[RMDB]
RNA sequence: GGGAACGACUCGAGUAGAGUCGAAAAGAUAUGGAGGCUCCUCGGAUGGCUAUGAAGUCGGAAACGAUGGAGCCACGAGGAGGCCUCCUAAGUCAAAGCAGCUAUGGCCUUCGGGCCAUAGCUGCAACAGGUUAAUCUAGUUCGCUAGAUUAACCUGAAAAGAAACAACAACAACAAC
Reactivity to 2A3 in 0.01 (KOAc 150mM, MgCl2 10mM, bicine 150mM(pH8.5), 24C), signal-to-noise 2, nucleotides 027 to 126: g010a030u070a080u180g040g000a000g000g000c010u000c020c010u010c000g130g160a190u190g020g000c000u050a250u300g040a030a040g010u010c040g000g000a040a080a050c020g000a010u010g030g030a010g000c000c010a000c000g000a000g030g000a030g000g010c010c010u000c000c000u000a000a000g010u010c030a000a180a000g000c010a010g000c010u010a020u010g000g000c070c020u110u160c300g000g040g000c000c010a000u010a000g000c030u010g010c000a000a000
Reactivity to DMS in 0.01 (KOAc 150mM, MgCl2 10mM, bicine 150mM(pH8.5), 24C), signal-to-noise 2, nucleotides 027 to 126: g000a060u000a300u020g000g000a030g000g020c000u000c000c010u000c000g000g000a130u000g030g010c010u000a210u030g020a100a210g010u010c000g010g000a120a100a170c020g010a020u000g010g000a030g020c000c010a000c010g000a010g000g010a030g010g020c000c000u000c010c000u000a000a090g010u000c040a130a120a110g000c000a010g000c000u000a000u000g000g000c020c000u000u010c170g020g000g010c000c000a000u000a000g010c000u000g000c000a020a050